[RMDB]
RNA sequence: GGGAACGACUCGAGUAGAGUCGAAAAUGGGUGACUCUCGGCAUUGCCCACAGUCAUCAGAAAUGCAAUUCGAUGGAAGCAGAUCCCAGACCAUACUGACUGGGAAAGCUCCCGUGGGGAUCACGCCCGGCAGUCUAACAUUCGUGUUAGACUGCCGAAAAGAAACAACAACAACAAC
Reactivity to 2A3 in 0.01 (KOAc 150mM, MgCl2 10mM, bicine 150mM(pH8.5), 24C), signal-to-noise 3, nucleotides 027 to 126: u060g030g000g000u020g010a030c010u030c020u010c080g020g000c050a220u110u300g050c010c040c000a010c010a000g030u030c000a020u010c020a040g140a030a090a040u190g030c060a030a110u040u070c010g090a020u070g000g020a040a000g010c010a000g050a240u070c000c000c010a030g050a200c140c030a170u200a300c130u200g120a080c000u000g000g000g000a030a070a000g010c010u000c000c000c000g010u050g000g030g000g020a020u110c020a000c100g110c000c030
Reactivity to DMS in 0.01 (KOAc 150mM, MgCl2 10mM, bicine 150mM(pH8.5), 24C), signal-to-noise 2, nucleotides 027 to 126: u050g020g000g000u000g040a040c010u000c070u020c300g050g000c060a090u030u040g020c050c000c020a070c290a030g000u000c010a000u000c040a020g030a110a120a140u000g000c130a150a050u050u010c010g000a040u000g000g000a030a060g050c000a100g000a220u020c000c000c000a010g000a090c100c090a250u020a140c120u000g000a160c010u000g000g010g000a020a110a090g000c000u000c040c000c060g000u000g000g000g000g060a030u000c070a110c080g000c000c040